[RMDB]
RNA sequence: GGGAACGACUCGAGUAGAGUCGAAAAUUAUCUGAUUGAUUGCGGUUGGACAAAUAACUACCACUCACCACCAUUUUAGGCGUAAAGCUGUCCUCGGCUACCCGCAAGUCGAAUUUUUGUCCAAUACAUAUUUAUGAUUUUUCGAAAUCAUAAAUAUAAAAGAAACAACAACAACAAC
Reactivity to 2A3 in 0.01 (KOAc 150mM, MgCl2 10mM, bicine 150mM(pH8.5), 24C), signal-to-noise 3, nucleotides 027 to 126: u080u030a050u090c030u060g080a130u110u100g030a100u050u100g070c050g050g020u030u020g030g010a010c010a010a090a050u080a070a040c070u060a050c020c000a020c020u030c000a020c010c000a020c000c010a040u030u050u060u260a040g020g000c010g010u070a100a060a030g000c010u010g020u080c010c010u020c010g040g000c010u020a100c010c000c030g010c040a020a020g060u040c040g060a040a040u070u050u010u090u110g020u000c000c000a030a010u060a090c020
Reactivity to DMS in 0.01 (KOAc 150mM, MgCl2 10mM, bicine 150mM(pH8.5), 24C), signal-to-noise 6, nucleotides 027 to 126: u010u010a050u010c070u010g000a120u010u010g000a110u000u000g010c110g000g010u000u000g010g010a030c020a020a040a040u000a070a070c130u000a090c070c050a060c050u000c040a070c070c020a070c040c030a100u000u000u000u010a100g010g000c050g010u000a080a090a130g010c030u000g010u000c030c050u000c040g010g010c020u000a100c070c020c020g020c110a070a050g010u000c040g020a060a080u000u000u000u010u000g010u000c010c010a030a060u010a080c050
The record gives the reactivity of an RNA of 177 nucleotides to 2A3 and DMS. For 2A3 the reverse transcriptase was SuperScript II with manganese. The 2A3 profile rests on 3,663 reads. For DMS the reverse transcriptase was MarathonRT. For DMS, 7,368 sequencing reads were counted. The reactions ran in a buffer of 150 mM KOAc, 10 mM MgCl2 and 150 mM bicine (pH 8.5), at 24 C. The data come from the RNA Mapping Database (RMDB), library OK2TST.